[RMDB]
RNA sequence: GGGAACGACUCGAGUAGAGUCGAAAAAUGUACAACCACUGAAGGGCUUCAUUGGGUGGGCAGGUAUUGUAGACAAUCCAGUCAUAUUGCGGGUGUGCACUAUGAUAGUUGAAUAUAUCUUUGAGUAACAUGUUUAUCGCGAUAGGGAGGCCCUUAGCUUGUUUCACUACUUCGGUAGUGAAACAAGAAAAGAAACAACAACAACAAC
Reactivity to 2A3 in 0.01 (KOAc 150mM, MgCl2 10mM, bicine 150mM(pH8.5), 24C), signal-to-noise 3, nucleotides 027 to 156: a010u130g010u040a070c010a080a090c030c030a060c100u110g060a060a050g000g000g020c000u070u010c090a080u090u170g020g080g000u170g010g020g050c060a020g040g000u090a070u040u040g070u030a020g000a160c020a000a070u030c000c050a030g060u060c010a010u000a060u030u080g010c050g050g080g070u110g040u110g020c000a000c050u030a020u080g010a010u040a120g030u050u110g030a110a000u080a010u000a030u150c030u080u080u100g080a060g050u090a060a040c040a070u090g040u110u090u070a150u130c010g000c010g080a040u010a030g040g030g020a000g020g040c060c000c020u010u010a000g000
Reactivity to DMS in 0.01 (KOAc 150mM, MgCl2 10mM, bicine 150mM(pH8.5), 24C), signal-to-noise 1, nucleotides 027 to 156: a160u010g020u000a130c040a060a070c040c050a140c030u000g010a040a090g020g030g000c030u000u020c020a110u020u040g000g020g010u010g010g040g000c080a080g020g020u010a020u000u000g030u000a120g000a100c010a030a050u000c080c050a200g010u010c040a120u000a050u000u020g020c030g040g040g040u000g020u010g010c000a020c100u000a060u000g030a020u000a130g010u010u020g020a080a120u000a010u000a040u000c030u010u000u000g030a190g040u000a080a040c010a090u000g000u020u000u000a060u040c080g010c050g000a110u000a090g010g020g010a070g060g010c030c000c000u000u000a070g000
About this RNA: Structure probing data (2A3 and DMS) for a 207-nucleotide construct. For DMS, 2,465 sequencing reads were counted. Conditions: 150 mM KOAc, 10 mM MgCl2 and 150 mM bicine (pH 8.5), 24 C. The 2A3 profile rests on 1,312 reads. The data come from the RNA Mapping Database (RMDB), library OK3TST.